RNA sequence: GGGAACGACUCGAGUAGAGUCGAAAAUACAGUCACCUUCUGUUAACCGGAUCCGAUGAGGAUCCACCGUACUAAGCGACAAUAAGGAGGGAUCCGCACGGCGGGAUCCAACGCGAAGAGUGGAUCCGGCGGUUGUGAAGUUCGCUUCACAACCGCCAAAAGAAACAACAACAACAAC
Reactivity to 2A3 in 0.01 (KOAc 150mM, MgCl2 10mM, bicine 150mM(pH8.5), 24C), signal-to-noise 2, nucleotides 027 to 126: u150a010c040a010g040u020c020a090c060c000u030u030c030u070g040u000u130a100a020c030c050g030g020a010u000c010c010g060a090u180g040a030g000g030a010u030c000c000a000c000c010g000u030a020c070u080a090a080g020c030g110a000c040a080a140u110a160a080g100g010a050g010g020g010a010u010c030c020g140c130a110c090g300g300c150g100g070g010a000u000c000c000a010a030c000g010c040g050a090a010g070a020g060u040g010g010a020u000c030c000
Reactivity to DMS in 0.01 (KOAc 150mM, MgCl2 10mM, bicine 150mM(pH8.5), 24C), signal-to-noise 1, nucleotides 027 to 126: u020a050c230a040g010u010c140a060c060c000u000u000c020u000g030u000u010a090a210c170c090g000g010a030u000c000c010g000a240u000g000a270g010g000a000u000c000c000a000c100c130g000u000a040c300u020a020a180g000c060g000a040c070a100a040u020a080a010g000g010a090g000g000g010a080u000c030c000g030c070a120c120g030g030c060g010g000g000a010u000c000c020a090a090c090g030c120g030a100a100g010a180g000u000g000g000a040u000c030c010